[RMDB]
RNA sequence: GGGAACGACUCGAGUAGAGUCGAAAAGGAUUGCGACUUUCAUUUGGAUAACACCUUCUUUAGUCUUCGAAUAAUUGCACGCUGAUAAUGGUUAGCCCUAGUAAAAAACUUUAACCAGUACAAAUUUCGCUGCAUUUGAUGGUCGAAAACUUGUGAGAUUCACCCACUAUUUCGAUAGUGGGUGAAUAAAAGAAACAACAACAACAAC
Reactivity to 2A3 in 0.01 (KOAc 150mM, MgCl2 10mM, bicine 150mM(pH8.5), 24C), signal-to-noise 2, nucleotides 027 to 156: g040g030a150u090u100g050c040g010a040c020u060u070u050c090a150u080u090u070g080g010a070u100a180a010c020a050c020c020u120u040c030u020u100u060a030g030u020c010u000u040c040g040a070a010u030a090a080u040u030g000c010a010c090g030c060u060g030a060u070a140a070u060g070g000u010u020a000g040c000c000c060u000a010g100u090a000a100a110a010a090a030c020u050u080u030a030a010c040c020a000g040u010a030c040a080a150a050u030u100u090c020g000c000u020g000c000a010u000u030u110g040a090u110g030g040u050c000g000a030a070a030a050c040u020u060g070u050g060a080g030
Reactivity to DMS in 0.01 (KOAc 150mM, MgCl2 10mM, bicine 150mM(pH8.5), 24C), signal-to-noise 2, nucleotides 027 to 156: g010g010a110u000u000g030c010g000a140c060u000u000u000c040a100u010u000u010g020g030a190u010a040a120c140a060c030c030u000u000c050u000u000u010a060g010u000c010u020u000c030g000a110a100u010a090a120u000u000g020c020a030c060g040c030u010g000a130u000a080a090u000g000g000u000u000a050g000c000c010c040u000a090g010u020a000a080a060a100a010a000c030u010u000u010a030a040c020c010a040g000u000a070c050a060a040a150u010u000u000c070g030c050u010g010c020a050u010u000u010g010a080u000g030g020u000c010g000a030a020a050a040c020u000u010g000u010g030a120g000